[RMDB]
The record gives the reactivity of an RNA of 177 nucleotides to DMS and 2A3. Reactivities are rounded to 0.1 and cut off at 0 and 3. Values cover nucleotides 27 to 126. For 2A3, 2,361 sequencing reads were counted.

RNA sequence: GGGAACGACUCGAGUAGAGUCGAAAACUUUCGAGCUUCGGCUCGAAAGAAAAGGAACCAGGCACGGUGGCUGAGAACUGACUAGCUAAUACGGGAGCUAAAAAAUCUGAGCCUUCGGGCUCAGAAACAUGGUAUUACUCUUCGGAGUAAUACCAUGAAAAGAAACAACAACAACAAC
Reactivity to DMS in 0.01 (KOAc 150mM, MgCl2 10mM, bicine 150mM(pH8.5), 24C), signal-to-noise 3, nucleotides 027 to 126: c000u000u000u000c000g010a010g000c000u000u020c230g050g020c000u010c000g010a000a010a020g000a030a040a080a150g010g000a110a140c030c030a060g010g010c040a030c050g000g010u000g000g000c030u000g000a090g010a070a100c090u000g010a100c080u000a040g000c060u000a050a070u000a070c140g000g010g000a080g020c030u020a000a030a060a070a080a090u000c000u000g000a010g000c000c010u010u000c220g040g010g010c000u000c010a000g000a020a040a110
Reactivity to 2A3 in 0.01 (KOAc 150mM, MgCl2 10mM, bicine 150mM(pH8.5), 24C), signal-to-noise 2, nucleotides 027 to 126: c000u010u000u030c010g000a010g000c010u060u150c170g100g020c000u000c000g010a010a000a000g000a000a060a000a000g070g000a000a050c010c010a040g040g000c030a010c040g060g020u030g030g000c060u080g060a030g020a100a070c030u040g070a060c010u030a030g020c030u030a100a000u110a150c080g050g070g010a030g030c030u100a120a060a020a010a030a090u010c000u000g000a000g000c030c000u020u040c220g100g000g000c000u000c000a000g000a000a000a000
The DMS profile rests on 2,961 reads. 2A3 is a SHAPE reagent: it acylates the 2'-hydroxyl of flexible nucleotides of all four kinds. The data come from the RNA Mapping Database (RMDB), library M2PK50.